An RNA of 177 nucleotides, treated with DMS and read out base by base. For DMS, 731 sequencing reads were counted.
RNA sequence: GGGAACGACUCGAGUAGAGUCGAAAAGAAGUACAGUUCGCUGUACUUCAAAUUCCCACCACCGCCGCCGCCGCCGCCGCCUCCACCGCCGCCACCACCAAUAAAGCAUUUAGUUCGCUAAAUGCAAGUAUAUUGUCUCCUUCGGGAGACAAUAUACAAAAGAAACAACAACAACAAC
Reactivity to DMS in 0.01 (KOAc 150mM, MgCl2 10mM, bicine 150mM(pH8.5), 24C), signal-to-noise 1, nucleotides 027 to 126: g010a010a000g000u000a000c000a010g020u010u000c210g010c010u010g000u020a010c000u010u020c000a020a070a210u000u000c000c000c010a240c130c150a020c060c090g000c020c040g000c020c050g020c010c010g030c050c020g000c070c060g010c080c020u000c010c030a060c120c040g020c050c000g010c080c020a050c040c040a090c090c080a110a060u010a070a040a150g000c020a000u000u000u010a010g020u000u020c190g010c020u000a000a000a070u000g000c000a010a060